[RMDB]
RNA sequence: GGGAACGACUCGAGUAGAGUCGAAAAGAUAUGGAAGCCAUGACAGGGAGCUCCACGUCGGAAACGACGUGUGAGCAUCGAUCUGUAUGGCUUCCUAAGUCAAAAGCUAUUUCUUCGGAAAUAGCAAGACCAUUUAUUUCUUCGGAAAUAAAUGGUCAAAAGAAACAACAACAACAAC
Reactivity to DMS in 0.01 (KOAc 150mM, MgCl2 10mM, bicine 150mM(pH8.5), 24C), signal-to-noise 3, nucleotides 027 to 126: g000a010u010a090u010g010g010a040a010g010c000c000a000u000g030a030c000a020g020g020g020a060g040c000u000c000c010a020c000g010u000c000g000g000a010a010a040c000g030a010c000g020u000g020u030g020a010g020c020a030u000c070g000a180u010c000u000g000u000a020u000g000g010c000u000u000c000c010u000a000a060g000u000c000a180a080a150a170g010c010u000a010u000u000u000c000u000u020c220g020g010a010a020a000u000a010g000c000a050a080
Reactivity to 2A3 in 0.01 (KOAc 150mM, MgCl2 10mM, bicine 150mM(pH8.5), 24C), signal-to-noise 3, nucleotides 027 to 126: g000a000u000a000u040g010g000a030a000g010c020c000a010u090g260a130c010a010g090g220g300a050g040c000u020c010c000a000c010g000u000c000g010g000a020a010a010c010g000a010c010g010u020g030u120g020a010g000c000a010u010c010g030a180u060c000u010g020u000a010u000g000g000c000u000u000c000c000u000a000a000g000u010c000a000a030a000a230g000c000u000a000u000u010u000c020u020u080c300g110g000a010a010a000u010a000g000c000a000a000